[RMDB]
An RNA of 177 nucleotides, treated with DMS and 2A3 and read out base by base. Values cover nucleotides 27 to 126. For DMS, 694 sequencing reads were counted.
RNA sequence: GGGAACGACUCGAGUAGAGUCGAAAACAGCUCAUUAAGCCCACUUAGAUAUGCUACGCUGUAUUUGGGACUAACCUCGGGUGUUGGUUUGGGUAUGGCAAACGCUGCAAAAACUAGAUUCAGUCAAGCAUAUUAUGGACUUCGGUCCAUAAUAUGCAAAAGAAACAACAACAACAAC
Reactivity to DMS in 0.01 (KOAc 150mM, MgCl2 10mM, bicine 150mM(pH8.5), 24C), signal-to-noise 1, nucleotides 027 to 126: c120a060g000c080u020c050a120u000u010a170a140g000c030c060c100a100c180u000u040a070g040a150u000a040u000g010c040u010a210c130g010c050u000g000u000a010u000u000u020g060g020g010a080c020u010a010a050c080c030u020c270g030g000g000u010g030u010u000g000g010u010u010u000g010g000g060u000a040u010g040g010c000a120a120a070c150g000c010u000g010c140a020a040a040a070a080c060u000a040g000a080u010u000c020a100g040u010c160a090a160
Reactivity to 2A3 in 0.01 (KOAc 150mM, MgCl2 10mM, bicine 150mM(pH8.5), 24C), signal-to-noise 1, nucleotides 027 to 126: c000a000g020c020u030c090a160u140u150a120a000g030c000c000c000a050c010u000u160a060g020a140u060a010u220g060c000u040a000c050g010c010u000g040u070a070u020u040u080g120g000g000a020c000u020a000a010c010c030u060c140g140g000g060u150g000u030u060g020g000u000u010u040g050g070g000u020a030u020g020g020c000a020a060a040c130g000c050u020g000c030a030a000a050a060a070c040u020a010g010a110u130u090c060a030g120u060c030a070a030